The record gives the reactivity of an RNA of 207 nucleotides to 2A3 and DMS.
The DMS profile rests on 3,771 reads.
Reactivities are given for positions 27 through 156.
RNA sequence: GGGAACGACUCGAGUAGAGUCGAAAACGCAAAGCUGCAGCGCGGCGCUCUGGAGGCCUUGGCCCGCGCACUGCUCUUUACAUGGCCCGACGUGAGGGCACUUCGCGGGCAGUGCUGCGGCCUCGUGAAACUGCCCCUAAGUUCGCUUAGGGGCAAACAUUUAGUAUUCCUUCGGGAAUACUAAAUGAAAAGAAACAACAACAACAAC
Reactivity to 2A3 in 0.01 (KOAc 150mM, MgCl2 10mM, bicine 150mM(pH8.5), 24C), signal-to-noise 3, nucleotides 027 to 156: c060g030c030a040a020a020g020c010u010g000c000a020g020c020g000c040g070g010c050g040c040u070c070u160g250g060a080g030g030c030c040u080u080g050g000c010c020c000g020c010g000c010a000c000u010g000c000u000c000u040u160u170a040c020a050u140g150g030c000c070c070g090a110c060g010u080g020a080g010g000g000c020a030c010u020u040c020g010c010g020g010g000c010a020g000u020g000c020u020g000c000g000g010c000c000u000c010g020u030g030a110a040a020c050u040g020c010c000c000c020u000a020a000g000u030u120c190g040c160u000u010a000g010g000g010g010c000a000a000a000
Reactivity to DMS in 0.01 (KOAc 150mM, MgCl2 10mM, bicine 150mM(pH8.5), 24C), signal-to-noise 2, nucleotides 027 to 156: c060g020c010a070a090a090g000c000u010g060c030a040g010c030g000c000g000g040c050g030c020u000c060u040g000g040a140g020g020c000c020u000u000g040g020c050c020c000g010c020g000c040a020c050u010g010c020u010c030u020u000u010a040c060a110u000g010g000c070c030c030g010a190c110g020u010g000a100g010g000g050c000a010c020u010u000c050g040c150g010g030g010c000a120g020u000g020c010u010g020c000g020g010c000c000u070c100g020u010g020a150a040a080c070u000g040c020c010c000c000u000a040a050g020u010u010c300g000c010u000u000a010g020g000g060g050c000a000a000a020